[RMDB]
RNA sequence: GGGAACGACUCGAGUAGAGUCGAAAAACACCACUCGCAAAUUCGGAUCCUGGGAAACAGGCAGAACUUCGGUUCGUAAGCUCGGGUAAACUAGUCCUUUACCGUCGUAUCGUACUUUGUGUGGCCACCAAAGGGAAGGCUUCGGCCUUCCCUUUGGAAAAGAAACAACAACAACAAC
Reactivity to DMS in 0.01 (KOAc 150mM, MgCl2 10mM, bicine 150mM(pH8.5), 24C), signal-to-noise 2, nucleotides 027 to 126: a090c110a100c040c040a060c050u060c100g040c050a030a030a100u000u010c060g010g000a060u000c020c010u000g020g020g000a080a060a020c090a020g010g000c060a080g000a020a020c040u000u020c100g000g000u040u000c020g000u000a070a040g000c040u000c090g000g000g000u000a010a030a020c080u000a090g000u010c260c180u000u010u000a020c020c010g000u020c010g000u020a020u000c040g000u000a030c100u000u010u060g020u010g000u000g000g010c070c030a100
Reactivity to 2A3 in 0.01 (KOAc 150mM, MgCl2 10mM, bicine 150mM(pH8.5), 24C), signal-to-noise 3, nucleotides 027 to 126: a000c050a020c010c010a020c010u030c000g010c030a050a020a070u060u030c080g170g000a040u060c010c000u010g010g020g090a020a160a070c020a020g020g000c000a040g010a020a010c020u060u090c120g120g000u020u010c000g030u090a060a020g000c000u020c010g020g000g000u040a040a050a040c010u020a040g070u090c000c000u010u040u040a060c020c020g120u180c020g030u200a020u060c030g000u030a030c040u010u040u040g020u010g010u050g040g010c000c020a030

Conditions: 150 mM KOAc, 10 mM MgCl2 and 150 mM bicine (pH 8.5), 24 C. Chemical mapping of a 177-nucleotide RNA with DMS and 2A3. The 2A3 profile rests on 2,217 reads. Reactivities are given for positions 27 through 126. For DMS, 2,953 sequencing reads were counted. The data come from the RNA Mapping Database (RMDB), library RFM100.